Chemical mapping of a 207-nucleotide RNA with DMS and 2A3. It was measured as part of the RMDB library RNAMAK. 2A3 adducts were read by reverse transcription with SuperScript II with manganese. The RNA was probed in 150 mM KOAc, 10 mM MgCl2 and 150 mM bicine (pH 8.5) at 24 C.

RNA sequence: GGGAACGACUCGAGUAGAGUCGAAAAGGACAAAAGCUUCGGCUUUUGUCCAAAAACCUUUGUGUGUUAUGGCAACAGCUGUCAAGGUCCCAUUGGGACCUUACAGACAUGCCAGUAACACACUCUGGUAAAACUGCAUAUGGUUCGCCAUAUGCAGCCUACUUAUAAGCUUCGGCUUAUAAGUAGGAAAAGAAACAACAACAACAAC
Reactivity to DMS in 0.01 (KOAc 150mM, MgCl2 10mM, bicine 150mM(pH8.5), 24C), signal-to-noise 2, nucleotides 027 to 156: g010g020a000c010a030a010a000a000g000c010u000u010c300g060g030c000u000u010u000u000g020u010c000c000a000a010a060a100a020c010c000u000u000u000g020u000g010u000g000u000u000a010u000g000g080c030a060a110c120a190g010c010u000g020u000c180a030a000g020g010u000c000c000c000a300u000u010g060g050g020a000c000c000u000u000a010c000a030g000a070c030a300u010g010c000c030a030g010u000a010a010c010a010c000a030c010u000c040u020g000g030u010a060a020a110a300c020u000g000c000a010u000a000u000g010g000u000u000c300g000c000c000a000u000a000u010g010c000a000g010
Reactivity to 2A3 in 0.01 (KOAc 150mM, MgCl2 10mM, bicine 150mM(pH8.5), 24C), signal-to-noise 4, nucleotides 027 to 156: g000g000a010c010a010a000a000a010g020c010u080u140c280g020g000c000u010u020u000u000g010u010c000c000a000a000a000a000a000c000c000u000u000u020g000u010g000u010g000u000u000a010u020g000g000c010a060a050c050a300g060c040u020g020u080c130a030a000g000g000u010c000c010c060a150u300u300g000g000g010a010c020c000u000u010a000c000a000g040a080c020a020u040g000c000c000a010g040u030a010a000c000a000c000a000c000u000c000u010g010g000u060a080a060a030a080c000u020g000c000a000u000a010u000g040g060u020u050c230g090c090c000a000u000a000u000g000c000a000g010